[RMDB]
RNA sequence: GGGAACGACUCGAGUAGAGUCGAAAACUCCAAUAGCGUAUAUUAUUGAUGUUGCAGUUAAAAAGUUCGUAGUUUGACUUUGCCUGUUUAUUAGAUUCUAAAUAUUAUGUUUGGAAUCAAUUUAAGCCUGUAGGAUAUAUUUCGAUAUAUCCUACAGAAAAGAAACAACAACAACAAC
Reactivity to 2A3 in 0.01 (KOAc 150mM, MgCl2 10mM, bicine 150mM(pH8.5), 24C), signal-to-noise 4, nucleotides 027 to 126: c050u060c010c010a050a140u130a130g030c060g080u160a090u010a040u300u060a060u100u140g050a050u030g060u060u070g000c040a040g020u120u140a000a110a040a050a050g060u100u100c070g020u130a120g110u070u170u170g010a000c000u020u030u040g040c000c010u020g030u050u080u000a070u080u060a050g000a000u000u000c000u010a010a000a030u130a110u230u270a160u300g080u000u020u000g010g000a000a010u000c010a020a020u080u050u030a010a010g050c000
Reactivity to DMS in 0.01 (KOAc 150mM, MgCl2 10mM, bicine 150mM(pH8.5), 24C), signal-to-noise 4, nucleotides 027 to 126: c020u000c130c020a030a060u010a050g000c090g030u020a080u050a100u040u020a110u020u000g010a090u000g020u000u000g000c190a050g010u000u000a050a080a020a020a020g010u000u000c100g010u010a090g010u010u020u000g010a010c010u000u010u010g010c080c020u000g010u000u010u000a030u030u000a210g000a010u000u000c000u000a010a010a010u010a080u030u020a070u060g000u000u000u000g000g000a010a000u000c000a050a070u010u010u000a040a050g010c110